[RMDB]
An RNA of 177 nucleotides, treated with 2A3 and DMS and read out base by base. Conditions: 150 mM KOAc, 10 mM MgCl2 and 150 mM bicine (pH 8.5), 24 C. For DMS, 2,718 sequencing reads were counted.

RNA sequence: GGGAACGACUCGAGUAGAGUCGAAAAGAUAUGGAAGAUCCAAGAGCUUGGACCCGUAACAUCGGAAACGAUGUACGGCUAGCUUGGAUCUUCCUAAGUCAAACCCACUGGCUUCGGCCAGUGGGAAGGAUACAUAGUCCUUCGGGACUAUGUAUCCAAAAGAAACAACAACAACAAC
Reactivity to 2A3 in 0.01 (KOAc 150mM, MgCl2 10mM, bicine 150mM(pH8.5), 24C), signal-to-noise 3, nucleotides 027 to 126: g010a000u010a010u040g000g000a000a000g030a000u000c000c000a060a050g230a060g300c140u300u300g120g060a090c030c000c010g000u000a150a110c000a010u000c000g000g030a000a020a000c000g000a000u000g000u000a000c000g020g000c040u030a010g010c000u000u030g030g000a000u010c000u000u000c000c010u000a000a000g000u000c010a000a020a290c000c000c000a000c000u000g010g020c010u060u130c300g210g000c000c000a010g000u020g020g000g000a010a070
Reactivity to DMS in 0.01 (KOAc 150mM, MgCl2 10mM, bicine 150mM(pH8.5), 24C), signal-to-noise 2, nucleotides 027 to 126: g000a010u000a050u040g000g010a020a010g000a000u000c000c010a060a140g020a140g000c070u000u010g000g010a080c300c000c000g000u000a050a080c010a000u000c000g020g000a000a010a010c000g020a000u000g010u000a000c000g000g010c020u010a000g020c000u000u000g000g000a020u020c000u000u000c000c000u000a000a060g000u000c020a110a150a260c020c000c000a010c000u000g000g010c000u000u000c250g010g000c010c000a000g030u000g000g000g010a020a000
Overview
2A3 adducts were read by reverse transcription with SuperScript II with manganese. Values are in units of 0.01, from 0 to 300, in steps of 10.